The record gives the reactivity of an RNA of 207 nucleotides to 2A3 and DMS. The RNA was probed in 150 mM KOAc, 10 mM MgCl2 and 150 mM bicine (pH 8.5) at 24 C. For 2A3, 10,526 sequencing reads were counted. DMS adducts were read by reverse transcription with MarathonRT.
RNA sequence: GGGAACGACUCGAGUAGAGUCGAAAAUCACUGUCUAAUUAGCAUCUGACCUUUGAUCAGUGGCAUACGUUUUCUACCUGUGAUUGGUCCACAUCAUAUCCAAAAGGAAGCAAAAAUUAAUUGAGCACCUACUAUAUACUAGCCUUUAUCCAGAUGCAUCCAUUUUCCUAUUCGUAGGAAAAUGGAUAAAAGAAACAACAACAACAAC
Reactivity to 2A3 in 0.01 (KOAc 150mM, MgCl2 10mM, bicine 150mM(pH8.5), 24C), signal-to-noise 9, nucleotides 027 to 156: u070c000a010c040u030g030u040c030u080a110a090u100u090a080g010c000a010u020c020u060g090a110c030c030u080u070u090g050a070u170c040a030g020u020g040g000c030a070u080a140c110g020u060u040u030u040c050u060a110c030c030u060g020u050g080a090u030u070g040g030u050c030c020a050c010a030u070c010a030u070a060u130c040c040a050a070a050a050g050g030a090a020g020c040a030a040a070a070a090u140u190a050a110u100u070g050a030g020c020a040c030c010u060a060c080u020a050u050a050u030a250c060u050a050g040c010c000u070u110u040a080u070c020c020a010g010a040u050g030c010
Reactivity to DMS in 0.01 (KOAc 150mM, MgCl2 10mM, bicine 150mM(pH8.5), 24C), signal-to-noise 4, nucleotides 027 to 156: u000c040a080c040u010g010u000c050u000a080a120u000u010a140g020c030a080u010c040u000g000a080c040c050u010u010u010g020a040u000c030a080g020u050g020g000c060a120u000a070c120g010u010u010u000u000c030u000a060c010c030u000g040u000g010a110u010u000g010g010u000c020c060a080c060a060u000c030a100u010a130u010c050c040a030a080a080a100g020g010a090a080g010c030a030a050a090a060a130u000u000a060a140u020u000g010a140g040c020a050c050c040u000a060c040u000a080u000a170u030a090c060u000a090g020c040c030u010u000u000a080u030c050c040a040g000a070u010g010c080